An RNA of 177 nucleotides, treated with DMS and read out base by base. Source: RMDB library TTRDEL, as collected in RNAgym. Conditions: 150 mM KOAc, 10 mM MgCl2 and 150 mM bicine (pH 8.5), 24 C. For DMS the reverse transcriptase was MarathonRT.

RNA sequence: GGGAACGACUCGAGUAGAGUCGAAAAGAUAUGGACACAGGCUUGGACCCUGCGGUCGGAAACGACCGCCAGGCUAGCCUGGUCCUAAGUCAAAAGACGUAGAUCAGCUUCGGCUGAUCUACGUCAACCUUUCAAUCUCGUUCGCGAGAUUGAAAGGAAAAGAAACAACAACAACAAC
Reactivity to DMS in 0.01 (KOAc 150mM, MgCl2 10mM, bicine 150mM(pH8.5), 24C), signal-to-noise 1, nucleotides 027 to 126: g020a010u000a270u000g000g000a020c000a110c010a000g020g020c010u010u010g010g010a140c240c010c040u010g020c000g020g000u000c000g020g000a030a100a220c000g010a010c000c000g000c060c050a010g000g040c080u010a020g010c010c000u000g010g000u040c000c000u000a000a070g000u000c000a070a070a160a070g000a020c010g010u000a000g020a020u010c010a010g000c000u000u000c120g010g000c010u000g000a000u000c000u000a010c000g010u000c000a020a060